Background
An RNA of 177 nucleotides, treated with 2A3 and DMS and read out base by base. The reactions ran in a buffer of 150 mM KOAc, 10 mM MgCl2 and 150 mM bicine (pH 8.5), at 24 C. For 2A3 the reverse transcriptase was SuperScript II with manganese.
[RMDB]
RNA sequence: GGGAACGACUCGAGUAGAGUCGAAAAGAUAUGGAUGCCGCAGGGAGACACUCGGAAACGAGUGAAUCAUCGAUCUGCGGGCAUCCUAAGUCAAACAAGACAAAUCCGUUCGCGGAUUUGUCUUGAAGUAACAUACUUUGUUCGCAAAGUAUGUUACAAAAGAAACAACAACAACAAC
Reactivity to 2A3 in 0.01 (KOAc 150mM, MgCl2 10mM, bicine 150mM(pH8.5), 24C), signal-to-noise 3, nucleotides 027 to 126: g000a010u040a020u110g000g010a000u010g010c010c010g000c010a010g020g050g000a020g010a010c010a000c000u000c000g020g000a060a030a020c010g000a010g000u020g020a010a090u090c020a040u210c060g080a050u000c010u000g000c050g000g010g010c010a000u010c000c000u000a030a000g020u000c030a060a070a110c000a010a000g020a000c010a000a000a000u000c020c000g030u090u090c300g010c020g120g000a000u000u010u010g000u000c000u000u000g000a000a000
Reactivity to DMS in 0.01 (KOAc 150mM, MgCl2 10mM, bicine 150mM(pH8.5), 24C), signal-to-noise 6, nucleotides 027 to 126: g000a030u000a270u000g000g010a000u000g000c000c000g000c010a010g010g000g020a300g000a290c010a010c000u000c000g010g000a050a060a130c000g000a010g010u000g000a050a080u010c110a200u010c070g010a300u020c010u000g010c000g020g000g020c000a000u010c010c000u000a010a070g010u000c020a120a100a260c010a010a010g000a010c000a000a010a000u000c000c010g000u000u010c220g020c000g010g000a010u000u000u000g000u000c000u000u000g000a030a100